The data come from the RNA Mapping Database (RMDB), library 15KREP. The record gives the reactivity of an RNA of 177 nucleotides to DMS and 2A3. The DMS profile rests on 3,006 reads. Reactivities are given for positions 27 through 126.
RNA sequence: GGGAACGACUCGAGUAGAGUCGAAAAUUAGCAAGACUUCAGACUGGAAGUGCAAGGUGACAGAUGUACUUUUCCCCGGCCAAAAAUACAGUAGCGAUUGUAAUGUCGUACGGUAUUCUUUGGACGGACGAUACAGCUGAUUCGUCAGCUGUAUCGUAAAAGAAACAACAACAACAAC
Reactivity to DMS in 0.01 (KOAc 150mM, MgCl2 10mM, bicine 150mM(pH8.5), 24C), signal-to-noise 2, nucleotides 027 to 126: u010u010a050g010c050a090a100g000a090c040u000u000c040a080g010a100c110u000g020g020a120a040g010u010g000c040a060a040g010g010u000g000a060c080a060g000a100u000g010u010a060c150u000u000u000u000c000c010c000c000g000g000c000c000a000a010a000a010a010u000a010c000a010g010u000a050g010c010g000a010u020u000g010u020a080a080u010g010u000c000g030u000a030c000g010g010u000a000u000u000c210u000u010u000g000g000a020c010g000g000
Reactivity to 2A3 in 0.01 (KOAc 150mM, MgCl2 10mM, bicine 150mM(pH8.5), 24C), signal-to-noise 2, nucleotides 027 to 126: u050u020a030g030c060a100a030g010a120c000u090u020c060a050g030a110c030u090g050g080a040a020g000u030g050c010a030a040g020g020u030g010a010c010a020g050a050u040g040u140a110c030u040u040u020u060c010c020c000c020g000g030c000c000a000a000a000a000a000u010a000c020a010g040u040a040g150c000g020a010u030u110g160u180a170a110u240g010u000c000g000u020a010c000g030g000u000a010u000u040c150u040u020u000g000g000a000c000g000g000